[RMDB]
This 177-nucleotide RNA was probed chemically with 2A3 and DMS. For DMS the reverse transcriptase was MarathonRT. Source: RMDB library OK2TST, as collected in RNAgym. For 2A3 the reverse transcriptase was SuperScript II with manganese. Conditions: 150 mM KOAc, 10 mM MgCl2 and 150 mM bicine (pH 8.5), 24 C. The DMS profile rests on 3,316 reads.
RNA sequence: GGGAACGACUCGAGUAGAGUCGAAAAAAUGAUUAGAAUUUUGGGGAUAUAGGAGACUUUUGAGAUGAAUUAAUCCUCUCCAUACUACUUUGUUAUGGGUUGCAUUGCACUGCUUCUAAGCCAACAACCUUGAAUACGAAUUCGUUCGUAUUCAAGGAAAAGAAACAACAACAACAAC
Reactivity to 2A3 in 0.01 (KOAc 150mM, MgCl2 10mM, bicine 150mM(pH8.5), 24C), signal-to-noise 3, nucleotides 027 to 126: a000a000u140g000a020u080u100a080g030a130a120u130u070u070u090g030g010g000g000a020u060a010u080a210g050g000a060g050a050c000u030u130u240u180g210a180g010a030u130g030a090a080u060u090a050a050u030c000c000u000c000u000c000c000a010u000a010c000u000a020c030u050u160u130g020u120u040a040u070g050g010g000u050u050g000c010a020u000u090g030c040a030c080u010g020c000u040u000c010u030a050a050g060c010c010a050a040c010a020a030
Reactivity to DMS in 0.01 (KOAc 150mM, MgCl2 10mM, bicine 150mM(pH8.5), 24C), signal-to-noise 4, nucleotides 027 to 126: a070a030u020g010a210u010u010a070g020a100a100u010u000u000u000g010g000g000g000a100u000a230u000a070g000g000a180g000a110c110u000u010u000u000g020a090g010a080u000g000a210a120u010u010a100a100u000c010c020u000c040u020c000c000a030u000a080c080u010a060c170u010u000u000g010u000u010a030u000g000g000g010u000u010g000c030a040u000u010g000c100a090c100u000g000c040u000u000c040u000a030a070g010c060c090a040a090c140a060a140